[RMDB]
RNA sequence: GGGAACGACUCGAGUAGAGUCGAAAAUAUCCUCGUUUCGACGAGGAUAACAGAAAACUCAUGCCAAAUAAAACGCUGACUGGCAUGAGAAAAGUCAGCGAAACAUACGGGUCUUCGGACCCGUAAAGGUAGGUAAAGAUUUCGAUCUUUACCUACCAAAAGAAACAACAACAACAAC
Reactivity to DMS in 0.01 (KOAc 150mM, MgCl2 10mM, bicine 150mM(pH8.5), 24C), signal-to-noise 3, nucleotides 027 to 126: u000a040u000c000c000u000c000g020u000u000u010c180g020a030c000g020a010g010g000a000u000a020a120c130a130g010a070a070a110a110c010u000c010a020u000g000c000c010a120a140a110u010a100a040a070a110c090g010c020u000g000a020c040u000g000g010c000a020u000g010a030g000a020a020a040a150g010u000c000a000g000c010g000a120a120a110c170a080u000a010c000g010g000g000u000c000u000u010c200g020g010a000c000c000c010g010u010a000a030a060
Reactivity to 2A3 in 0.01 (KOAc 150mM, MgCl2 10mM, bicine 150mM(pH8.5), 24C), signal-to-noise 4, nucleotides 027 to 126: u050a000u010c000c010u000c010g000u040u040u100c170g100a010c010g000a010g000g000a000u010a010a020c010a020g140a020a080a000a010c010u010c000a010u010g010c000c010a190a300a050u180a070a110a050a030c080g010c010u000g000a010c010u010g000g000c000a000u010g030a000g000a020a070a000a000g000u020c000a000g000c010g040a070a060a020c040a000u060a010c020g000g010g000u000c010u020u070c160g110g010a000c010c000c000g000u000a000a000a000
The record gives the reactivity of an RNA of 177 nucleotides to DMS and 2A3. It was measured as part of the RMDB library M2PK50. 2A3 is a SHAPE reagent: it acylates the 2'-hydroxyl of flexible nucleotides of all four kinds. 2A3 adducts were read by reverse transcription with SuperScript II with manganese. The reactions ran in a buffer of 150 mM KOAc, 10 mM MgCl2 and 150 mM bicine (pH 8.5), at 24 C.